[RMDB]
RNA sequence: GGGAACGACUCGAGUAGAGUCGAAAAGUCUCCCGAUUCGUCGGGAGACCGAGAAAUUCAGGUGAUUUGCUACCUUUAAGUGGAGCUAGAAAUUCAAAGGAAACACCAUGGCGUUCGCGCCAUGGAACUGCCUAUAUCCAUUCGUGGAUAUAGGCAGAAAAGAAACAACAACAACAAC
Reactivity to DMS in 0.01 (KOAc 150mM, MgCl2 10mM, bicine 150mM(pH8.5), 24C), signal-to-noise 4, nucleotides 027 to 126: g000u000c000u000c000c000c000g000a030u000u020c170g040u000c000g010g010g010a010g020a000c000c020g000a100g000a260a080a100u000u000c060a050g010g010u010g010a120u000u000u000g010c040u000a070c010c000u000u000u020a060a100g010u000g000g000a050g020c080u000a040g010a050a060a100u010u000c070a060a070a060g020g010a070a050a100c220a120c000c000a000u000g000g020c000g010u000u020c230g010c010g020c010c010a010u000g000g010a050a060
Reactivity to 2A3 in 0.01 (KOAc 150mM, MgCl2 10mM, bicine 150mM(pH8.5), 24C), signal-to-noise 3, nucleotides 027 to 126: g000u000c000u000c010c000c010g000a010u020u060c150g040u000c000g030g000g000a020g010a000c000c000g010a020g120a010a190a040u160u100c060a040g050g060u070g120a150u100u070u110g050c020u120a300c020c000u090u150u140a150a060g060u140g060g020a000g000c030u080a070g170a110a170a060u180u120c060a100a050a040g110g030a080a110a010c070a040c030c000a000u000g020g000c000g000u060u050c220g040c020g000c040c000a000u000g000g000a000a010